[RMDB]
Source: RMDB library M2RFPK, as collected in RNAgym. The record gives the reactivity of an RNA of 207 nucleotides to 2A3.
RNA sequence: GGGAACGACUCGAGUAGAGUCGAAAAAGCCACCACUACGGCGGUGGCAAGUAGAAAAGUUGGUGCUUAGACCACGCCCUCUACCGUAAUAAUAGAUAAAUAGGCGAGUAUCAGUACGCUGAUACAAAAAACACUCACACGUUCGCGUGUGAGUGAAGAUGAACGAGUUCUUCGGAACUCGUUCAUCAAAAGAAACAACAACAACAAC
Reactivity to 2A3 in 0.01 (KOAc 150mM, MgCl2 10mM, bicine 150mM(pH8.5), 24C), signal-to-noise 1, nucleotides 027 to 156: a010g000c010c000a010c000c000a010c000u120a020c130g160g000c010g040g010u010g000g010c000a010a010g040u040a010g030a060a070a030a030g000u080u040g020g010u100g060c160u250u090a020g020a070c000c000a000c010g000c000c000c000u000c000u010a020c020c060g080u060a000a080u100a120a050u010a090g070a050u100a110a100a050u080a010g100g000c060g030a010g040u040a010u010c010a000g060u050a020c160g000c110u010g000a010u000a000c000a000a240a000a000a000a000c020a000c000u000c000a000c000a000c000g070u080u040c250g000c010g090u000g000u000g010a000g000u000g000a010a000
Description
The RNA was probed in 150 mM KOAc, 10 mM MgCl2 and 150 mM bicine (pH 8.5) at 24 C.